[RMDB]
Overview: The data come from the RNA Mapping Database (RMDB), libraries RFM100 and RFMREP. Structure probing data (DMS and 2A3) for a 177-nucleotide construct. The RNA was probed in 150 mM KOAc, 10 mM MgCl2 and 150 mM bicine (pH 8.5) at 24 C.
RNA sequence: GGGAACGACUCGAGUAGAGUCGAAAACAAAUACAGGCUUAGUUGAGGGCAUCAGAAGAAGCCAUUGACUUGUCAGGCGUUUUUCUGAUCUCCAGAUUUCAUGUUGCGGACAGUUCCUGCUCGCACCAUACUGAUUUGUUUUCGAACAAAUCAGUAUAAAAGAAACAACAACAACAAC
Reactivity to DMS in 0.01 (KOAc 150mM, MgCl2 10mM, bicine 150mM(pH8.5), 24C), signal-to-noise 7, nucleotides 027 to 126: c080a060a080a090u030a090c130a080g000g010c080u010u010a080g000u010u000g000a130g000g010g000c300a030u000c000a010g010a030a020g010a010a100g010c000c000a110u020u010g010a030c040u010u010g010u000c030a080g000g010c030g010u000u000u000u000u000c000u000g000a020u000c030u000c010c020a130g010a100u010u010u000c060a050u010g010u000u000g010c020g000g000a050c030a050g010u010u010c110c030u000g010c030u000c020g020c030a040c100c100
Reactivity to 2A3 in 0.01 (KOAc 150mM, MgCl2 10mM, bicine 150mM(pH8.5), 24C), signal-to-noise 9, nucleotides 027 to 126: c020a000a070a010u230a070c070a050g110g040c070u150u170a030g040u090u090g060a180g020g010g000c020a000u010c000a000g010a010a000g000a010a000g010c000c020a070u050u120g030a040c040u120u260g060u150c020a020g010g050c140g130u000u000u010u010u000c000u000g010a000u000c000u000c000c000a060g030a280u040u100u090c060a050u100g050u040u020g030c000g000g010a030c010a040g020u090u060c010c020u020g010c020u010c010g010c000a010c020c010